[RMDB]
RNA sequence: GGGAACGACUCGAGUAGAGUCGAAAAGAGCUUAGUGCGCGGCUUUACUAUAACGGUAUGUGCCGUUUAUGUUCACAUACUUACAUAAGGUUUCAAAUACCCUAAUCUAGUAUUUGUUCGCACCAUAGAUAGUAUUCAGAUUCGUUUGGGUGCUAUCAAAAGAAACAACAACAACAAC
Reactivity to DMS in 0.01 (KOAc 150mM, MgCl2 10mM, bicine 150mM(pH8.5), 24C), signal-to-noise 9, nucleotides 027 to 126: g000a090g010c030u010u020a080g020u010g000c020g030c170g000g000c020u000u000u010a040c040u010a060u030a090a110c200g010g010u000a030u010g010u010g010c300c050g010u030u020u030a050u030g000u020u000c060a020c050a030u010a030c030u010u010a110c190a080u010a080a100g010g000u010u010u030c190a050a060a070u020a030c010c020c020u000a060a080u020c180u010a030g010u010a010u010u010u000g010u010u010c020g010c020a020c010c070a070u020a100
Reactivity to 2A3 in 0.01 (KOAc 150mM, MgCl2 10mM, bicine 150mM(pH8.5), 24C), signal-to-noise 9, nucleotides 027 to 126: g090a010g040c080u120u160a040g010u040g040c010g010c030g030g000c000u040u040u020a020c020u030a020u050a200a040c060g000g010u020a020u050g060u110g020c020c010g150u070u110u080a100u110g040u070u080c020a020c000a060u070a040c020u070u070a010c020a070u120a050a060g040g020u020u090u140c090a080a080a030u100a050c010c010c000u060a070a070u070c040u040a020g010u010a080u030u050u110g050u040u060c020g000c020a020c020c010a040u070a110
Conditions: 150 mM KOAc, 10 mM MgCl2 and 150 mM bicine (pH 8.5), 24 C. An RNA of 177 nucleotides, treated with DMS and 2A3 and read out base by base. Values cover nucleotides 27 to 126. It was measured as part of the RMDB library OK1LIB.